[RMDB]
RNA sequence: GGGAACGACUCGAGUAGAGUCGAAAAUGUGUCCUAGGGAAUUGGAAGGUCAUCCUUCACAGGAUCGUGUGGAAGUCCUGCUCGGGGCGGAAGCAUUAAAACCAUUAGAGCUAGUCAAUGCGUGGCGUUACCUCCAGGUUCUUCGGAACCUGGAGAACACAAUACAUGCCUUCGGGCAUGUAUUGUGAAAAGAAACAACAACAACAAC
Reactivity to DMS in 0.01 (KOAc 150mM, MgCl2 10mM, bicine 150mM(pH8.5), 24C), signal-to-noise 2, nucleotides 027 to 156: u000g030u000g030u000c000c010u010a080g020g050g030a050a080u000u030g010g010a150a050g020g030u010c120a130u000c010c020u010u010c060a130c080a030g000g000a050u010c080g010u000g020u010g020g000a300a250g000u000c020c050u010g000c150u010c150g040g030g000g010c060g010g010a230a180g010c010a050u000u020a070a060a060a070c060c000a150u000u000a040g000a120g030c030u000a080g000u010c050a050a090u010g000c060g010u000g010g010c000g000u000u000a100c070c010u000c010c000a070g000g020u020u000c000u000u000c300g060g020a000a010c010c000u000g040g000a000g000a000a060
Reactivity to 2A3 in 0.01 (KOAc 150mM, MgCl2 10mM, bicine 150mM(pH8.5), 24C), signal-to-noise 3, nucleotides 027 to 156: u150g090u010g050u030c020c000u020a060g050g000g050a090a130u230u150g060g010a090a050g060g030u140c030a050u130c020c010u070u090c060a050c020a070g010g010a040u050c090g020u030g020u030g060g000a030a030g010u040c010c000u040g120c120u120c060g010g000g000g020c000g010g000a020a000g010c030a010u000u150a040a040a060a010c030c010a020u010u150a040g030a020g070c050u070a030g060u080c060a010a150u120g050c090g070u030g030g010c040g080u090u100a130c010c000u000c010c010a000g000g000u000u010c000u040u080c220g070g000a000a000c000c000u010g000g000a000g000a010a000